[RMDB]
RNA sequence: GGGAACGACUCGAGUAGAGUCGAAAACGAUCUGUUCGCAGAUCGAGCUACGGAGACGUAGCAAAGCGCGCGAGGGCCCGGGCGCGCGCCCUACCGGAAAUAAAACCAUAUCCGCGUGUGCUAGGAUAUGGCCGGGCCCAAAGAAAAAGCACACGGACCUAUACUAGCAGUUCGCUGCUAGUAUAGGAAAAGAAACAACAACAACAAC
Reactivity to 2A3 in 0.01 (KOAc 150mM, MgCl2 10mM, bicine 150mM(pH8.5), 24C), signal-to-noise 1, nucleotides 027 to 156: c010g010a010u000c000u020g040u130u100c240g000c130a000g000a010u020c000g000a010g000c000u000a000c010g060g000a080g030a090c000g030u000a000g010c000a050a030a020g000c000g000c020g010c010g010a070g000g020g020c000c000c000g000g000g010c000g000c000g030c030g030c050c010c000u120a130c060c070g110g190a040a100a110u250a060a120a020a020c030c000a000u000a000u000c000c000g000c050g030u020g000u000g000c000u020a000g010g000a000u000a000u000g000g030c020c000g000g010g010c030c000c000a000a030a010g000a020a070a020a000a000g000c020a000c000a000c010g000g070a030